[RMDB]
RNA sequence: GGGAACGACUCGAGUAGAGUCGAAAACUUUUUUGAGAUGACACACUCCAGGCGUGAAAGACCGCUGAUAAAAGUGUCCGCACCCCCUAACGGGUUACAAGUAGGGGAGGGCGAAAGUGGGUACAAGGUUCACAAAGUAGUUCGCUACUUUGUGAACAAAAGAAACAACAACAACAAC
Reactivity to DMS in 0.01 (KOAc 150mM, MgCl2 10mM, bicine 150mM(pH8.5), 24C), signal-to-noise 1, nucleotides 027 to 126: c020u000u000u030u010u000u010g000a000g060a080u000g060a050c020a030c020a070c060u000c030c300a150g020g000c010g000u000g000a140a200a130g000a180c130c030g020c040u000g010a060u000a040a020a180a130g000u000g000u010c020c070g010c040a030c000c000c010c000c010u000a120a070c030g000g000g030u000u040a020c110a140a240g000u000a010g020g000g000g000a020g010g000g010c030g010a000a040a050g030u000g000g010g040u000a140c120a090a070g000
The record gives the reactivity of an RNA of 177 nucleotides to DMS. DMS adducts were read by reverse transcription with MarathonRT. Reactivities are rounded to 0.1 and cut off at 0 and 3. The DMS profile rests on 621 reads. It was measured as part of the RMDB library RFMREP.